An RNA of 177 nucleotides, treated with DMS and read out base by base. For DMS, 909 sequencing reads were counted. For DMS the reverse transcriptase was MarathonRT. The data come from the RNA Mapping Database (RMDB), library OK2TRN.
[RMDB]
RNA sequence: GGGAACGACUCGAGUAGAGUCGAAAAUCUGGUCAUAGCCCGAAGUCUCAUGGCAGUCCCAAAGGAGGCUUACAACUCCUGCAUCACAAGAAAAAGGAAGCCACUGCCAGCUGGGGGGAUCUGCAGCUCCCAAGACUGUAUUCGUACAGUCUUGGGAAAAAGAAACAACAACAACAAC
Reactivity to DMS in 0.01 (KOAc 150mM, MgCl2 10mM, bicine 150mM(pH8.5), 24C), signal-to-noise 2, nucleotides 027 to 126: u010c060u000g020g020u000c020a140u010a140g010c050c000c030g020a080a110g010u000c040u000c070a080u040g000g000c020a060g010u020c000c040c050a100a060a090g020g000a040g020g000c140u000u010a120c160a100a110c040u000c010c000u000g000c100a050u010c080a080c110a070a150g030a030a050a060a150a150g010g010a080a090g050c060c150a070c040u000g010c020c020a060g000c050u000g000g000g000g000g000g000a060u020c030u010g000c050a050g000c180